[RMDB]
RNA sequence: GGGAACGACUCGAGUAGAGUCGAAAAUAGAGACAAUCCGCAGCUGACCUGGCCAAAAGUAUAUUUACAAAGUAGCUAGGCAGUUCAACGCUCGCUAAGAUGUGGGUUGACCAUUAAUGGUCGGCUUAAGGUACGGGCUACGCCACCCGAGAGGGUGCCUCCACCAAUAGUUCGCUAUUGGUGGAGGAAAAGAAACAACAACAACAAC
Reactivity to 2A3 in 0.01 (KOAc 150mM, MgCl2 10mM, bicine 150mM(pH8.5), 24C), signal-to-noise 4, nucleotides 027 to 156: u130a010g100a020g010a010c040a070a100u020c030c030g030c070a030g010c000u010g110a300c000c000u000g010g010c000c010a010a030a040a020g010u010a090u030a090u180u300u030a030c020a010a040a010g010u000a010g010c000u000a000g000g000c000a000g000u020u020c020a060a010c080g000c010u000c000g000c020u070a070a030g030a110u110g030u090g100g020g000u010u010g000a000c000c000a040u130u230a110a190u230g000g000u010c000g000g000c000u040u020a030a030g020g000u020a010c010g000g000g000c000u040a020c080g040c030c000a010c010c020c000g010a020g020a020g010g000g000u010g000
Reactivity to DMS in 0.01 (KOAc 150mM, MgCl2 10mM, bicine 150mM(pH8.5), 24C), signal-to-noise 1, nucleotides 027 to 156: u020a080g000a200g000a080c020a070a130u000c000c010g000c080a070g030c000u020g020a180c000c040u010g030g060c000c010a090a060a080a170g030u010a070u000a110u000u000u000a050c030a080a100a110g020u000a090g020c030u000a060g000g010c010a010g060u010u000c030a050a070c010g040c000u030c000g020c020u000a140a080g000a130u000g030u000g010g010g000u000u010g020a040c000c000a090u010u000a130a130u010g020g040u010c000g010g030c010u000u040a030a090g020g010u010a040c030g000g000g020c000u000a080c100g000c010c080a050c010c000c000g010a120g000a240g040g010g000u010g000